The record gives the reactivity of an RNA of 177 nucleotides to DMS and 2A3. The 2A3 profile rests on 18,235 reads. It was measured as part of the RMDB library TTRDES. 2A3 adducts were read by reverse transcription with SuperScript II with manganese. Reactivities are given for positions 27 through 126. The DMS profile rests on 8,352 reads.

[RMDB]
RNA sequence: GGGAACGACUCGAGUAGAGUCGAAAAAGAUAUGGAUCCGUAACUCGCUUGGAUUUAUGGGUAAAACUAUAUCGGAAACGAUAUAGGAGUACGCCCAUUGUCAGCGAGGAGAAGGAUCCUAAGUCAACUGAUUAACAUUGUUCGCAAUGUUAAUCAGAAAAGAAACAACAACAACAAC
Reactivity to DMS in 0.01 (KOAc 150mM, MgCl2 10mM, bicine 150mM(pH8.5), 24C), signal-to-noise 7, nucleotides 027 to 126: a090g000a060u000a300u010g000g010a000u000c000c000g000u000a150a300c000u000c000g010c010u010u010g010g010a030u000u000u000a010u000g010g000g010u000a030a120a180a160c000u000a000u000a000u000c000g000g000a140a130a230c020g010a010u000a000u000a000g010g020a070g020u000a070c300g000c000c000c000a010u000u000g000u000c000a040g000c010g000a010g000g010a050g010a160a230g000g000a010u000c000c000u010a020a120g000u010c050a130a180
Reactivity to 2A3 in 0.01 (KOAc 150mM, MgCl2 10mM, bicine 150mM(pH8.5), 24C), signal-to-noise 4, nucleotides 027 to 126: a010g050a030u070a030u130g010g010a000u000c010c000g010u020a030a040c000u000c010g050c050u130u300g240g010a070u300u300u160a020u060g000g020g040u110a020a040a010a040c000u000a000u000a000u010c000g000g040a090a070a000c010g000a000u010a010u000a010g020g000a010g080u010a030c130g000c000c000c010a000u000u010g010u000c010a000g000c000g000a000g010g010a000g010a000a000g000g000a000u000c000c000u000a050a000g040u010c010a050a060